The record gives the reactivity of an RNA of 207 nucleotides to DMS and 2A3.
Conditions: 150 mM KOAc, 10 mM MgCl2 and 150 mM bicine (pH 8.5), 24 C.
For 2A3, 3,338 sequencing reads were counted.
The data come from the RNA Mapping Database (RMDB), library RNAMAK.
The DMS profile rests on 1,746 reads.

[RMDB]
RNA sequence: GGGAACGACUCGAGUAGAGUCGAAAAGUAUUAUUCGUAAUACCUACCGGGGUCCUUCGCGAAACGAGGCUUUUGACGAGCUGAAGCCUCCACGGCUCGAUAAGCUCCCCACCGUUGCGAAGGACGGAGGCACCCUUACAGAUCCAUUCGUGGAUAAGAAUAAUUCGUUGUUCGCAACGAAUUAUUCAAAAGAAACAACAACAACAAC
Reactivity to DMS in 0.01 (KOAc 150mM, MgCl2 10mM, bicine 150mM(pH8.5), 24C), signal-to-noise 1, nucleotides 027 to 156: g000u000a040u000u000a020u000u000c210g120u000a060a050u000a010c020c020u000a230c000c040g060g000g000g020u000c000c000u010u040c050g000c050g000a030a090a080c060g010a240g100g030c000u000u000u000u000g010a220c090g090a060g000c040u030g000a040a080g000c000c040u000c000c000a300c050g000g010c010u020c030g100a170u010a010a070g010c040u010c300c020c030c060a300c070c070g000u120u000g000c040g010a050a010g000g030a020c010g020g000a040g090g000c050a130c020c000c000u000u000a170c140a110g020a050u000c080c040a060u010u020c130g020u000g010g020a010u000a050a140
Reactivity to 2A3 in 0.01 (KOAc 150mM, MgCl2 10mM, bicine 150mM(pH8.5), 24C), signal-to-noise 4, nucleotides 027 to 156: g030u020a010u080u040a040u040u190c110g030u060a030a030u020a050c010c040u040a090c040c030g070g030g140g010u000c000c010u010u010c030g000c030g110a170a070a030c010g030a050g080g060c030u080u080u120u140g240a120c050g000a000g000c000u010g000a040a010g010c000c000u020c010c000a020c020g000g000c000u000c010g050a070u030a190a020g000c010u080c080c040c020c010a090c030c000g000u000u040g010c000g000a000a000g010g000a000c000g000g000a000g000g000c000a010c020c010c000u060u080a120c070a130g130a120u030c010c000a050u030u190c160g140u090g010g000a030u050a110a040